[RMDB]
RNA sequence: GGGAACGACUCGAGUAGAGUCGAAAAUUAAAUAGCGUAAUCGACAUUGAGAAUGUACGCUAAGUGUGUGUUGUAUGGGCAACGUCCAAUUGAUCACACACACAGUUGGACCUAAUGUCGAAAAAAACGAAUACAUUGGAUUCGUCCAAUGUAUUCGAAAAGAAACAACAACAACAAC
Reactivity to DMS in 0.01 (KOAc 150mM, MgCl2 10mM, bicine 150mM(pH8.5), 24C), signal-to-noise 9, nucleotides 027 to 126: u000u000a030a060a120u000a020g010c010g010u010a020a070u000c020g010a020c010a020u000u010g010a090g000a080a090u000g010u000a020c010g010c010u000a020a090g020u000g020u000g010u000g010u000u010g030u000a070u000g010g010g010c020a110a120c300g010u000c000c000a030a180u010u010g000a080u010c050a010c010a000c010a010c000a020c020a100g000u000u010g010g010a220c020c020u010a030a020u000g010u000c000g020a000a000a050a070a050a050a120
Reactivity to 2A3 in 0.01 (KOAc 150mM, MgCl2 10mM, bicine 150mM(pH8.5), 24C), signal-to-noise 9, nucleotides 027 to 126: u130u070a030a020a060u060a020g020c020g010u030a030a070u040c010g000a010c010a010u020u060g030a030g030a140a120u140g020u050a010c010g000c030u010a080a070g010u000g000u010g000u000g010u060u150g060u070a100u070g030g010g000c100a300a110c190g030u000c000c010a020a040u090u120g080a050u120c000a000c000a000c000a000c000a000c000a030g100u170u160g060g030a020c000c000u020a030a020u010g000u000c000g060a060a010a000a000a000a000a000
This 177-nucleotide RNA was probed chemically with DMS and 2A3. DMS adducts were read by reverse transcription with MarathonRT. 2A3 adducts were read by reverse transcription with SuperScript II with manganese. It was measured as part of the RMDB library M2PK90. As a SHAPE reagent, 2A3 marks flexible, mostly unpaired nucleotides at the ribose 2'-OH.